The record gives the reactivity of an RNA of 177 nucleotides to 2A3 and DMS. It was measured as part of the RMDB library OK2TRN. The 2A3 profile rests on 1,321 reads. DMS adducts were read by reverse transcription with MarathonRT. Values cover nucleotides 27 to 126. High DMS reactivity at an A or C suggests that its Watson-Crick edge is free.

RNA sequence: GGGAACGACUCGAGUAGAGUCGAAAAAUGGAGCCUUGCUAGAAGAGGUUGAGGAGCUACCUCGGGACAUAGCAGAGGCAAAGGCUAGAGUAGAGGAGUAUCAAAUAGUUGAGGUAUUCAACGUUAACACCAUACCUGGGUUCGCCCAGGUAUGGUGAAAAGAAACAACAACAACAAC
Reactivity to 2A3 in 0.01 (KOAc 150mM, MgCl2 10mM, bicine 150mM(pH8.5), 24C), signal-to-noise 2, nucleotides 027 to 126: a000u110g090g040a040g000c000c020u050u010g000c040u010a010g030a130a020g010a100g000g030u020u050g050a130g140g090a050g030c040u050a020c000c000u000c000g000g060g040a070c060a050u060a020g000c040a000g030a040g180g010c000a020a030a000g010g000c020u000a000g000a010g030u040a010g010a030g020g020a010g030u070a090u170c080a070a150a100u060a050g020u020u030g040a030g090g120u140a180u050u160c000a020a020c000g010u070u060a070a040
Reactivity to DMS in 0.01 (KOAc 150mM, MgCl2 10mM, bicine 150mM(pH8.5), 24C), signal-to-noise 2, nucleotides 027 to 126: a130u000g010g010a200g020c000c020u000u000g020c040u000a030g010a220a150g000a040g020g010u000u020g010a110g020g010a130g020c080u010a060c050c020u010c020g030g000g010a130c200a170u000a040g010c010a050g000a060g020g010c070a070a060a080g000g030c100u000a050g000a130g010u000a020g010a050g010g000a060g010u000a090u010c110a060a080a070u010a070g020u000u010g000a020g000g000u020a060u010u000c030a020a050c080g010u000u030a110a170